This 307-nucleotide RNA was probed chemically with 2A3 and DMS. DMS adducts were read by reverse transcription with MarathonRT. For DMS, 2,185 sequencing reads were counted. The data come from the RNA Mapping Database (RMDB), library POS240.
RNA sequence: GGGAACGACUCGAGUAGAGUCGAAAACGUGCAGCGGUGACGCUGCACGAAGCAGGUCUUCGGACCUGCAAGAGAUAACGGUGACGUUAUCUCAGCAUAGCUACGGCUAUGCAACAGUAGCACGUGAGUGCUACUGAAGAGCCUCGGUGACGAGGCUCAAAUUGGUGAUUAUUUCCGCUUACUCCUGUGCGGAUGCAACAAUGUUUUGACAUUGAUCACUGAGUUUCAGACUGACUAACAGUCUGGGAUCCCCCAAGGGAGACCAUAGCCGUCGCUUCGGCGACGGCAAAAGAAACAACAACAACAAC
Reactivity to 2A3 in 0.01 (KOAc 150mM, MgCl2 10mM, bicine 150mM(pH8.5), 24C), signal-to-noise 2, nucleotides 027 to 266: c010g010u010g000c000a000g000c000g050g090u140g070a070c020g000c010u000g000c000a000c000g000a000a000g000c000a000g010g010u010c020u030u140c250g060g010a000c000c010u000g000c000a000a020g000a000g000a010u000a000a000c020g030g020u060g080a000c000g000u000u000a000u000c000u000c000a000g000c000a000u020a000g000c000u020a030c300g140g010c000u000a000u000g020c010a010a000c000a000g010u000a000g010c010a000c020g110u140g130a140g000u000g020c000u000a000c000u000g000a060a020g010a000g000c000c000u000c000g000g030u070g000a020c010g000a000g000g010c000u000c000a000a000a000u000u010g010g000u000g000a000u010u010a010u160u300u000c000c000g000c020u030u140a100c010u000c020c000u010g000u000g000c000g020g000a000u010g000c000a000a000c000a010a000u010g020u040u100u100u300g090a020c020a000u010u000g000a000u000c000a010c000u000g000a000g000u000u000u000c000a010g000a000c000u010g010a030c030u090a200a120c110a010g000u000c000u000g030g000g000a030u060c000c000c000c000c010a010a020g040g000g010a000g010a000c010c090a090u270a130
Reactivity to DMS in 0.01 (KOAc 150mM, MgCl2 10mM, bicine 150mM(pH8.5), 24C), signal-to-noise 1, nucleotides 027 to 266: c000g000u010g010c000a000g030c000g040g020u020g000a140c000g020c000u000g030c030a000c000g010a050a080g010c000a000g010g000u000c000u000u010c170g020g010a000c000c000u000g020c000a050a060g030a030g010a020u000a000a000c000g000g020u030g010a080c000g000u000u000a000u000c000u000c000a120g030c000a080u000a020g020c010u000a050c140g090g030c000u000a000u000g000c020a150a270c010a010g050u020a000g000c000a010c000g020u040g000a260g020u000g020c020u000a000c000u000g000a140a110g000a000g000c000c000u000c040g030g000u010g000a140c000g030a000g000g000c000u000c000a000a020a090u000u010g000g000u000g000a000u020u000a200u000u040u000c010c000g030c000u000u000a100c020u000c020c000u020g000u000g010c000g000g000a000u000g010c030a130a100c000a020a000u000g000u000u010u020u000g000a000c010a000u000u010g010a020u000c040a020c010u000g010a020g040u010u000u000c000a010g000a030c010u010g000a270c250u010a190a190c010a010g000u010c000u010g000g000g000a030u000c020c010c010c040c220a130a100g030g010g000a010g020a130c270c070a060u010a050